The record gives the reactivity of an RNA of 177 nucleotides to 2A3 and DMS. For 2A3 the reverse transcriptase was SuperScript II with manganese. For DMS, 1,331 sequencing reads were counted. High 2A3 reactivity points to a flexible backbone, as in loops and unpaired stretches.

RNA sequence: GGGAACGACUCGAGUAGAGUCGAAAAAGUUGAGGAGGACGAAGGUCACAAGUCCACAAUGCAGAUUAGGGAUGCCACACCUGGAGAUCUAGGAAGCAUUCUAGAAGAAGACUCCUCUAAGGUACACCCCUCGUGCAACAUUCGUGUUGCACGAGGGAAAAGAAACAACAACAACAAC
Reactivity to 2A3 in 0.01 (KOAc 150mM, MgCl2 10mM, bicine 150mM(pH8.5), 24C), signal-to-noise 1, nucleotides 027 to 126: a000g130u130u120g000a000g000g000a000g060g060a110c050g060a240a030g030g010u100c000a000c050a090a170g070u040c010c010a050c010a080a140u250g010c030a000g110a180u010u010a040g000g030g000a000u060g000c000c000a120c030a080c040c000u000g000g000a180g000a220u030c000u000a020g040g000a010a010g010c110a000u000u000c030u000a040g000a090a000g020a000a000g050a000c040u020c000c020u020c000u000a030a100g050g050u030a040c000a020c000
Reactivity to DMS in 0.01 (KOAc 150mM, MgCl2 10mM, bicine 150mM(pH8.5), 24C), signal-to-noise 2, nucleotides 027 to 126: a030g020u050u000g000a010g000g000a050g000g010a110c050g030a100a030g050g000u000c030a160c150a110a300g010u000c000c010a010c210a020a020u000g000c240a090g000a030u000u000a090g030g000g000a020u000g000c080c010a050c300a020c000c010u000g000g000a160g000a220u000c010u000a010g000g070a100a190g050c170a000u000u000c000u000a000g000a060a060g000a130a100g190a250c040u000c000c000u000c000u000a110a030g000g000u010a110c190a070c050
Source: RMDB library OK1LIB, as collected in RNAgym. The RNA was probed in 150 mM KOAc, 10 mM MgCl2 and 150 mM bicine (pH 8.5) at 24 C.